RNA sequence: GGGAACGACUCGAGUAGAGUCGAAAACGUCAUGCACAUCGGCUGGUUGCUCGUCGGGUCACUCGGCGUUCAACGAGACUCAGUGACUGGCGUUGUCCGUAGCGUGCUUCUGCGCGACGGCGGCGUGAGACUCAAAUCAGACAGCUAAGCAUGUAGAGCUUAUGUACGAGUUCGCUCGUACAUAAGCAAAAGAAACAACAACAACAAC
Reactivity to DMS in 0.01 (KOAc 150mM, MgCl2 10mM, bicine 150mM(pH8.5), 24C), signal-to-noise 1, nucleotides 027 to 156: c070g020u000c010a060u000g020c030a210c040a220u000c070g020g000c030u000g000g050u000u000g000c010u000c080g080u010c020g050g020g010u040c090a170c010u000c000g030g020c050g030u000u020c060a060a080c080g040a100g000a070c030u010c040a120g020u000g010a100c030u000g000g030c000g030u000u000g020u000c000c000g000u000a010g050c060g090u000g010c130u000u000c130u010g000c020g000c020g020a000c010g030g000c000g000g020c010g000u010g040a160g000a100c070u010c070a110a150a150u000c110a120g030a140c000a060g020c070u000a070a160g020c030a030u000g010u050a120g000a300
Reactivity to 2A3 in 0.01 (KOAc 150mM, MgCl2 10mM, bicine 150mM(pH8.5), 24C), signal-to-noise 5, nucleotides 027 to 156: c040g050u030c010a010u060g050c020a070c010a220u150c160g020g000c000u010g040g000u010u020g000c020u000c010g010u000c010g000g000g100u260c070a140c190u030c010g000g010c000g000u000u010c020a020a020c020g070a020g060a090c050u050c100a040g040u030g100a070c020u020g100g010c000g000u010u000g030u000c000c010g000u010a040g020c010g010u040g050c160u140u120c090u300g010c000g000c010g000a010c000g000g000c010g000g030c020g020u040g090a030g040a050c030u040c110a010a070a080u070c010a020g100a160c020a000g010c010u060a080a010g010c020a030u030g030u120a050g020a010
Structure probing data (DMS and 2A3) for a 207-nucleotide construct.
Conditions: 150 mM KOAc, 10 mM MgCl2 and 150 mM bicine (pH 8.5), 24 C.
For DMS the reverse transcriptase was MarathonRT.
For 2A3 the reverse transcriptase was SuperScript II with manganese.
Values cover nucleotides 27 to 156.
It was measured as part of the RMDB library ARCHII.